RNA sequence: GGGAACGACUCGAGUAGAGUCGAAAAAGUGGGCUGUCAUCUUGGAUCCCACCAGUCUUAGCCAUUUUGGUCAGGAGAGAGAACUUUUUAUCUCAGGCAUUUUCUUUCCUAAAGAUAAGCAGAGUUACCAUUGUACGCUUUUCGAAGCGUACAAUGGAAAAGAAACAACAACAACAAC
Reactivity to DMS in 0.01 (KOAc 150mM, MgCl2 10mM, bicine 150mM(pH8.5), 24C), signal-to-noise 1, nucleotides 027 to 126: a030g040u000g000g000g010c090u000g000u010c060a090u000c070u000u000g000g010a210u000c020c010c010a100c040c060a100g010u000c030u000u000a160g010c010c000a130u010u000u010u000g000g020u000c130a030g010g000a080g000a010g000a030g000a040a100c070u000u000u000u020u000a060u050c100u010c110a080g000g020c130a060u000u000u000u000c020u000u000u010c010c010u010a060a070a070g010a100u000a040a100g000c060a110g000a100g000u000u000a210
Reactivity to 2A3 in 0.01 (KOAc 150mM, MgCl2 10mM, bicine 150mM(pH8.5), 24C), signal-to-noise 1, nucleotides 027 to 126: a000g000u020g040g010g030c050u070g080u110c070a110u020c070u080u180g040g020a050u080c000c030c000a010c000c010a030g000u030c000u060u060a020g000c000c030a070u050u070u110u270g070g000u040c060a010g050g000a000g010a000g000a030g010a030a070c010u180u260u060u160u300a110u010c070u010c100a070g160g000c010a010u070u060u070u000c000u000u050u040c000c000u060a110a120a010g000a070u070a100a050g000c010a050g020a030g080u130u050a060